[RMDB]
RNA sequence: GGGAACGACUCGAGUAGAGUCGAAAACUGUACUGGCUCUUGGAACAAGGUCACUCAAAUUGCUAACAUGUUCUUGGAACAGACUCAGCAUUCCCUUAACUUUGUGGGAGAGUUCGUUGUCAACGAUAUGCAUUGUACUUCGGUACAAUGAAAAGAAACAACAACAACAAC
Reactivity to DMS in 0.01 (KOAc 150mM, MgCl2 10mM, bicine 150mM(pH8.5), 24C), signal-to-noise 9, nucleotides 027 to 129: c000u010g000u010a070c060u030g000g000c080u000c000u000u000g000g020a070a030c020a030a090g030g000u030c160a080c090u000c170a060a090a090u060u010g010c080u010a040a090c130a090u020g000u010u010c000u020u020g040g020a020a040c020a000g020a160c100u020c010a050g020c050a140u010u010c020c010c000u010u010a080a080c120u000u030u030g030u030g010g000g010a060g020a040g010u020u010c060g030u000u060g020u000c140a020a050c090g000a020u030a030u060g010
Reactivity to 2A3 in 0.01 (KOAc 150mM, MgCl2 10mM, bicine 150mM(pH8.5), 24C), signal-to-noise 9, nucleotides 027 to 129: c000u020g040u120a000c020u010g020g030c040u010c000u020u040g020g010a030a000c010a090a080g080g000u100c060a030c060u110c030a080a140a230u220u120g020c020u090a050a040c020a100u030g000u020u030c000u010u040g030g030a000a000c010a020g120a300c040u010c030a010g020c010a090u030u000c010c000c000u010u030a090a060c040u070u100u170g160u160g030g060g010a110g000a040g020u070u060c050g000u050u030g090u050c030a040a010c050g020a020u020a050u270g040